[RMDB]
RNA sequence: GGGAACGACUCGAGUAGAGUCGAAAAUGCGUAAUCCGCCAAGCGCAGGUAGCCGCGAAAGCCGAGUGCCAGUACAUCAACCAGACUUUCGACUGGUUUAUCCUGCGGGAAGCUGUCUUGCCAGAGCCGUGAACGGAUGGUUCGCCAUCCGUUCACGAAAAGAAACAACAACAACAAC
Reactivity to 2A3 in 0.01 (KOAc 150mM, MgCl2 10mM, bicine 150mM(pH8.5), 24C), signal-to-noise 2, nucleotides 027 to 126: u090g000c000g010u050a000a050u010c020c000g000c070c010a070a000g080c010g020c040a030g000g020u040a000g040c000c010g010c020g020a040a020a000g040c020c020g080a040g080u080g070c100c000a010g090u170a100c050a170u090c020a070a040c030c000a040g100a050c010u050u080u030c060g070a100c030u180g050g010u000u030u030a040u050c000c030u040g010c000g000g000g000a050a040g010c040u030g000u030c010u000u020g010c000c000a040g010a040g080c030
Reactivity to DMS in 0.01 (KOAc 150mM, MgCl2 10mM, bicine 150mM(pH8.5), 24C), signal-to-noise 2, nucleotides 027 to 126: u000g020c070g010u040a000a070u000c030c040g010c000c020a200a210g000c000g000c000a050g020g000u000a130g030c020c040g000c000g000a050a010a060g100c020c020g010a120g000u030g010c260c000a130g000u000a040c150a090u090c170a150a150c030c120a200g030a040c070u000u000u000c020g000a120c050u190g030g000u000u000u030a120u040c030c000u010g050c080g000g020g000a040a100g000c000u030g000u010c010u000u090g070c040c000a110g000a160g010c130

This 177-nucleotide RNA was probed chemically with 2A3 and DMS. Conditions: 150 mM KOAc, 10 mM MgCl2 and 150 mM bicine (pH 8.5), 24 C. Values cover nucleotides 27 to 126. For 2A3 the reverse transcriptase was SuperScript II with manganese.